[RMDB]
RNA sequence: GGGAACGACUCGAGUAGAGUCGAAAAACUAGUAUGUACAGGGGUGAGUUGACCUGUCAUCUAGACUGCUGACCAUCAACUCACCGGUCAGCUGGCUGAUGUCCACAGAGUACGACAUCAGUACUCAGACUAUUGACUAGUUCGCUGGUCGAUAGUCAAAAGAAACAACAACAACAAC
Reactivity to 2A3 in 0.01 (KOAc 150mM, MgCl2 10mM, bicine 150mM(pH8.5), 24C), signal-to-noise 9, nucleotides 027 to 126: a000c000u000a000g050u130a060u060g060u090a010c010a010g030g020g040g060u140g100a170g070u060u070g090a080c000c010u010g000u000c000a000u000c000u010a010g070a120c060u040g000c000u000g000a010c010c000a080u090c040a050a090c050u030c070a050c030c020g000g000u000c000a000g000c010u010g040g000c000u000g000a000u000g000u010c020c020a080c060a090g130a030g110u120a060c070g000a000c000a010u000c000a000g000u050a120c060u040c070a030
Reactivity to DMS in 0.01 (KOAc 150mM, MgCl2 10mM, bicine 150mM(pH8.5), 24C), signal-to-noise 9, nucleotides 027 to 126: a120c010u000a010g010u060a010u000g000u060a020c010a030g000g000g000g010u010g010a150g020u000u000g010a060c010c010u000g000u000c000a010u000c010u000a010g000a270c050u000g000c020u000g000a010c000c060a300u020c100a050a050c100u010c090a070c150c100g010g000u000c000a010g000c010u010g000g000c000u000g000a010u000g000u000c000c090a150c170a150g010a190g020u020a150c300g000a030c020a020u000c020a020g000u000a030c070u020c110a220